An RNA of 177 nucleotides, treated with DMS and 2A3 and read out base by base. The reactions ran in a buffer of 150 mM KOAc, 10 mM MgCl2 and 150 mM bicine (pH 8.5), at 24 C.
RNA sequence: GGGAACGACUCGAGUAGAGUCGAAAAGUCCCGGAGUUCGCUCCGGGACAAAGAACCUCAAAUUGACGCAAACUUCCGCGUCAACGCGAGGAAACGAGGAAAAAAUCACGGAGUUCGCUCCGUGAAAGGACAUAAUUUUCUUCGGAAAAUUAUGUCCAAAAGAAACAACAACAACAAC
Reactivity to DMS in 0.01 (KOAc 150mM, MgCl2 10mM, bicine 150mM(pH8.5), 24C), signal-to-noise 1, nucleotides 027 to 126: g000u000c000c000c000g060g010a040g000u010u000c180g030c010u000c010c000g000g000g040a010c000a000a060a040g000a080a130c000c010u020c010a020a300a110u000u000g000a000c000g060c020a100a170a170c240u000u010c170c150g000c000g000u000c000a000a000c000g000c300g000a010g020g000a050a040a050c090g000a110g040g000a040a020a040a040a090a080u000c000a020c000g000g000a010g060u000u000c160g010c000u000c000c000g000u010g010a010a020a050
Reactivity to 2A3 in 0.01 (KOAc 150mM, MgCl2 10mM, bicine 150mM(pH8.5), 24C), signal-to-noise 1, nucleotides 027 to 126: g000u020c020c000c000g000g000a030g000u090u200c180g020c070u000c000c020g040g020g000a000c000a000a000a010g000a020a070c000c000u000c010a000a000a000u000u000g020a000c000g030c020a030a140a300c180u250u100c150c080g000c020g000u000c010a030a000c010g010c020g010a000g070g000a050a000a000c140g000a110g100g000a220a090a040a020a000a050u060c010a000c000g000g000a010g010u040u100c120g040c130u000c010c000g000u000g010a000a000a000

The data come from the RNA Mapping Database (RMDB), library M2PK50. The 2A3 profile rests on 1,233 reads. For 2A3 the reverse transcriptase was SuperScript II with manganese.